Chemical mapping of a 177-nucleotide RNA with DMS and 2A3. The DMS profile rests on 2,982 reads.
RNA sequence: GGGAACGACUCGAGUAGAGUCGAAAAGAACAGAGUGCCGCACUGGCUGCCCUGAUGAGAACAUACCCGUGACUAGCGUCGAAACAUCAACAGUGCGGGCUGUUGGUGUCGGAAGCCACUAAAAGAAAGUCAGGGUAAUGUUCGCAUUACCCUGACUAAAAGAAACAACAACAACAAC
Reactivity to DMS in 0.01 (KOAc 150mM, MgCl2 10mM, bicine 150mM(pH8.5), 24C), signal-to-noise 2, nucleotides 027 to 126: g000a150a160c110a030g000a100g010u000g010c040c000g000c140a150c070u000g000g020c060u000g010c010c010c000u000g000a050u000g000a110g030a050a040c040a020u010a040c120c040c040g010u000g000a080c140u020a100g000c010g000u050c010g010a110a090a030c000a000u020c020a020a000c070a060g010u010g000c160g010g000g020c020u000g000u000u000g020g010u000g000u000c100g000g000a100a140g010c050c040a050c090u030a080a070a150a080g050a100a040
Reactivity to 2A3 in 0.01 (KOAc 150mM, MgCl2 10mM, bicine 150mM(pH8.5), 24C), signal-to-noise 2, nucleotides 027 to 126: g070a040a050c050a030g050a000g020u060g040c000c020g000c010a050c010u060g000g060c020u010g100c000c000c000u100g060a130u050g010a030g070a090a010c000a020u040a080c000c050c050g040u070g010a130c090u120a050g030c000g040u030c010g060a100a030a150c010a000u040c010a000a060c000a000g050u040g170c030g030g080g000c000u000g010u030u040g000g030u000g000u040c040g030g060a120a050g000c000c020a010c020u090a060a070a040a000g230a050a070
Values cover nucleotides 27 to 126.